RNA sequence: GGGAACGACUCGAGUAGAGUCGAAAACAGGCCGUGGGUAGGAGUUCCAGUUUCUCCACAUCCUUGGGGCACAUGUGCAGGUUUGUUACAUGUUACAUGGGCAUACUGCAUGAUGCUGAGGUUCGGGGUAUGACAGAUCCUAUCACGCAUCAGUGUCGGUAUCACUGCUUUUCGAAGCAGUGAUACCAAAAGAAACAACAACAACAAC
Reactivity to 2A3 in 0.01 (KOAc 150mM, MgCl2 10mM, bicine 150mM(pH8.5), 24C), signal-to-noise 2, nucleotides 027 to 156: c030a050g130g000c070c030g060u040g010g100g010u040a010g010g010a070g010u160u210c040c010a030g020u060u090u020c030u060c010c000a060c060a110u110c020c010u040u010g040g000g080g050c040a020c000a110u160g010u020g030c040a010g060g130u040u060u000g010u000u050a150c000a020u030g060u130u280a100c020a050u040g010g020g000c000a000u040a080c000u000g010c000a000u060g080a150u010g050c030u010g000a000g010g000u080u240c180g000g000g060g000u170a100u210g040a010c010a010g050a030u010c000c030u020a000u050c020a010c110g000c050a090u120c080a080g090u080g110u220c040
The data come from the RNA Mapping Database (RMDB), library OK3TST. The record gives the reactivity of an RNA of 207 nucleotides to 2A3. For 2A3 the reverse transcriptase was SuperScript II with manganese. Conditions: 150 mM KOAc, 10 mM MgCl2 and 150 mM bicine (pH 8.5), 24 C.